[RMDB]
RNA sequence: GGGAACGACUCGAGUAGAGUCGAAAAAUUACAUACGUAUUCUUGCUCAGGAGUUGCAAGAUGGUAUUUUAGAUACUUUCCAGUCAAUGACUGACAUGUCGUAUGUUAACAAUUUUGUGCAGGAGGCGAUAUCAACCUAGUUCGCUAGGUUGAUAUCAAAAGAAACAACAACAACAAC
Reactivity to DMS in 0.01 (KOAc 150mM, MgCl2 10mM, bicine 150mM(pH8.5), 24C), signal-to-noise 9, nucleotides 027 to 126: a090u010u000a030c010a010u000a010c000g010u020a070u010u000c050u000u000g010c190u000c010a020g010g010a300g010u000u000g000c030a220a100g010a010u000g010g010u000a000u000u000u010u010a120g010a030u000a000c010u000u000u000c010c050a160g000u020c010a010a010u000g000a300c000u000g000a020c020a010u000g000u000c010g000u000a010u000g000u000u000a050a060c190a060a080u000u000u000u000g010u000g010c070a070g010g000a070g010g010c210
Reactivity to 2A3 in 0.01 (KOAc 150mM, MgCl2 10mM, bicine 150mM(pH8.5), 24C), signal-to-noise 7, nucleotides 027 to 126: a000u080u030a000c000a010u000a000c000g050u080a100u140u150c040u030u050g040c050u010c010a010g010g010a040g020u010u000g000c010a030a030g000a010u020g000g010u010a030u010u100u090u180a160g040a060u010a010c000u020u010u000c020c020a020g120u200c010a040a020u030g020a030c000u000g000a000c000a010u030g020u030c000g000u010a000u010g010u020u040a030a010c010a020a030u080u110u120u180g110u070g030c060a050g010g120a040g010g090c050